[RMDB]
This 177-nucleotide RNA was probed chemically with 2A3 and DMS. The 2A3 profile rests on 1,453 reads.
RNA sequence: GGGAACGACUCGAGUAGAGUCGAAAAGACGCCUGUGUGGCGAAGCGAGCAUGAGAAAGAGCCGCACAGUCCAUCUUAUAUAAAGCGGCCAGAUGGAUUGCUCGCAAAAAGAUCCAUAUCACUGAGACAGGCAUAAUUAUUUCGAUAAUUAUGCCUGAAAAGAAACAACAACAACAAC
Reactivity to 2A3 in 0.01 (KOAc 150mM, MgCl2 10mM, bicine 150mM(pH8.5), 24C), signal-to-noise 2, nucleotides 027 to 126: g050a000c020g070c010c000u070g060u030g020u110g070g020c020g020a060a000g000c000g000a000g000c030a020u040g000a010g060a110a130a000g080a050g000c030c000g040c000a030c030a020g080u020c010c010a080u040c040u230u090a130u000a040u110a150a130a000g000c060g050g000c000c000a020g020a150u040g000g010a000u030u000g010c000u000c000g000c000a020a030a030a010a010g020a050u000c000c000a010u050a040u180c120a120c180u060g030a060g040a030
Reactivity to DMS in 0.01 (KOAc 150mM, MgCl2 10mM, bicine 150mM(pH8.5), 24C), signal-to-noise 4, nucleotides 027 to 126: g030a180c060g020c020c010u030g000u030g000u020g010g000c010g020a110a110g000c000g000a020g000c000a020u000g000a300g000a030a130a200g000a190g000c000c010g070c000a090c120a080g000u000c090c080a100u030c070u010u030a110u040a100u020a070a110a120g010c000g000g020c040c080a140g010a160u010g010g030a120u020u010g010c000u020c010g000c040a020a030a040a090a010g010a090u010c020c010a090u030a090u020c090a030c080u020g000a130g000a300
For DMS the reverse transcriptase was MarathonRT.